RNA sequence: GGGAACGACUCGAGUAGAGUCGAAAACGCCGUGCUUAUCCGCGCACGUGACUAUGGUCACCAUGGCAACCGCCAUGGUGAGGCUUAAGUACGGCCCGCGGCCGCCGCGGGCGUCGCUCGCGCGCGGGAAGCAGUUUGUAUUCGUACAAACUGCUUCAAAAGAAACAACAACAACAAC
Reactivity to DMS in 0.01 (KOAc 150mM, MgCl2 10mM, bicine 150mM(pH8.5), 24C), signal-to-noise 4, nucleotides 027 to 126: c200g030c030c030g020u010g020c060u010u000a080u000c010c010g020c030g020c030a080c060g000u000g010a050c100u010a070u000g020g000u010c000a000c000c000a010u000g010g000c010a160a150c300c300g000c000c000a000u000g010g000u000g000a000g000g020c080u000u000a050a060g010u000a040c040g010g030c030c040c010g030c070g000g010c120c100g010c020c010g020c000g010g010g030c020g010u000c100g010c030u000c000g010c020g000c090g010c010g000g000
Reactivity to 2A3 in 0.01 (KOAc 150mM, MgCl2 10mM, bicine 150mM(pH8.5), 24C), signal-to-noise 3, nucleotides 027 to 126: c060g030c010c020g020u070g040c050u130u100a070u140c020c010g000c000g030c030a040c070g030u030g010a040c040u070a080u280g080g000u020c000a000c000c010a000u010g010g010c040a120a290c230c240g000c000c000a000u010g010g000u010g000a000g010g060c020u070u040a070a020g020u040a060c030g090g050c000c020c010g070c030g050g000c130c060g090c040c000g000c030g030g000g000c030g140u050c070g000c020u020c020g020c000g000c040g000c010g030g000

Source information
Chemical mapping of a 177-nucleotide RNA with DMS and 2A3.